[RMDB]
RNA sequence: GGGAACGACUCGAGUAGAGUCGAAAAUGUUGGGGCUGGAGCCUUCUAACCAGUGCACCUGUGUAGGAAUGUGUGCUCGUGUGCUCACAAAGGUGUGUGCAUGCAUGGGGUGUGCAGAUGUGUGUACCGUUCCGGUGUUAUUCGUAACACCGGAACGAAAAGAAACAACAACAACAAC
Reactivity to DMS in 0.01 (KOAc 150mM, MgCl2 10mM, bicine 150mM(pH8.5), 24C), signal-to-noise 2, nucleotides 027 to 126: u000g030u000u000g010g020g020g020c050u010g020g010a130g000c050c050u000u000c040u000a090a160c060c050a080g020u000g020c070a080c060c020u000g010u010g010u010a120g000g010a080a050u010g030u010g010u010g000c040u000c090g020u000g010u010g000c020u000c040a030c060a100a150a070g010g010u000g010u000g000u000g010c030a050u010g010c020a100u000g020g000g010g010u000g020u010g010c010a080g010a100u010g000u000g020u000g010u000a070c100
Reactivity to 2A3 in 0.01 (KOAc 150mM, MgCl2 10mM, bicine 150mM(pH8.5), 24C), signal-to-noise 1, nucleotides 027 to 126: u140g010u040u080g000g000g010g000c050u080g080g000a040g010c070c000u030u020c020u010a070a040c040c000a000g060u030g070c040a020c010c040u100g000u000g030u150a020g080g080a170a110u070g070u010g000u040g050c000u000c070g080u040g020u030g030c000u000c040a020c030a060a200a090g090g020u090g020u000g020u000g030c000a030u020g000c030a030u110g000g020g050g050u060g000u030g050c000a020g010a100u100g070u000g040u020g030u030a070c000
This 177-nucleotide RNA was probed chemically with DMS and 2A3. Reactivities are rounded to 0.1 and cut off at 0 and 3. DMS adducts were read by reverse transcription with MarathonRT. DMS (dimethyl sulfate) methylates the pairing face of unpaired adenines and cytosines. The DMS profile rests on 2,282 reads.